[RMDB]
RNA sequence: GGGAACGACUCGAGUAGAGUCGAAAAACGCAGGCCUAUACGUAGGCCUGCGAACUUGGUAACAGAGAAGGGGUCCUCACUUGCCCACUCUUUGGAAUCCACCUUCCAUUGAUCUUCUGGGGGAAAACCCUUCCUAGUCAUUCGUGACUAGGAAGGGAAAAGAAACAACAACAACAAC
Reactivity to DMS in 0.01 (KOAc 150mM, MgCl2 10mM, bicine 150mM(pH8.5), 24C), signal-to-noise 2, nucleotides 027 to 126: a100c020g020c000a020g000g010c000c000u000a030u000a080c120g010u000a000g000g000c010c000u010g010c000g010a010a010c080u000u010g010g010u000a140a220c030a040g000a040g030a080a080g010g000g000g020u000c170c070u000c070a050c080u040u000g000c020c030c020a040c070u020c000u000u030u020g020g000a100a140u010c020c030a050c100c060u030u000c020c000a140u000u020g000a060u050c090u020u020c090u000g020g000g000g020g000a070a040a050a090
Reactivity to 2A3 in 0.01 (KOAc 150mM, MgCl2 10mM, bicine 150mM(pH8.5), 24C), signal-to-noise 7, nucleotides 027 to 126: a000c000g000c000a000g000g010c000c000u040a030u030a040c260g100u010a010g000g020c000c000u000g000c000g000a000a000c020u030u070g030g000u040a100a010c010a020g030a000g030a080a080g040g010g000g010u090c030c020u120c070a100c070u110u210g000c010c000c000a060c020u000c000u010u010u000g030g020a040a050u030c020c010a040c030c030u120u110c030c010a050u060u210g070a110u140c050u140u010c040u120g020g000g000g000g000a020a050a020a060